Annotation
This 177-nucleotide RNA was probed chemically with 2A3 and DMS. The reactions ran in a buffer of 150 mM KOAc, 10 mM MgCl2 and 150 mM bicine (pH 8.5), at 24 C. Values cover nucleotides 27 to 126. Source: RMDB library OK1LIB, as collected in RNAgym.
RNA sequence: GGGAACGACUCGAGUAGAGUCGAAAAUAGAAGGAUCUAAAUUUAAUUCCUCUGAGAACUUAACUUCAUCGAUAGUAAUAUUAGUUAUUGCACUAUAUGAUAGGCAACUCUUCAUAUUGCUUAAUAAAUCAUCGAGUGGAUUCGUCCACUCGAUGAUAAAAGAAACAACAACAACAAC
Reactivity to 2A3 in 0.01 (KOAc 150mM, MgCl2 10mM, bicine 150mM(pH8.5), 24C), signal-to-noise 4, nucleotides 027 to 126: u200a010g130a130a030g050g010a020u010c070u220a030a100a120u240u130u130a080a080u110u000c010c000u040c070u070g080a070g020a180a020c050u120u170a040a060c010u030u060c090a150u140c110g140a110u140a100g000u020a000a070u000a030u100u020a000g020u120u040a130u120u060g010c040a070c290u000a000u010a050u240g230a190u060a020g040g000c010a010a000c040u030c030u170u030c030a010u000a000u010u000g010c010u030u060a150a070u050a100a300
Reactivity to DMS in 0.01 (KOAc 150mM, MgCl2 10mM, bicine 150mM(pH8.5), 24C), signal-to-noise 2, nucleotides 027 to 126: u000a070g000a060a040g000g000a000u000c180u000a020a070a230u000u020u040a080a190u000u000c000c020u000c130u010g000a120g000a070a020c100u050u070a030a150c010u000u030c010a120u010c300g000a090u000a000g000u000a070a000u000a000u000u020a030g020u000u010a130u000u020g000c070a120c070u020a040u020a030u030g000a010u040a020g000g080c020a010a070c140u000c000u000u000c110a020u000a030u000u000g000c010u030u010a030a080u030a030a070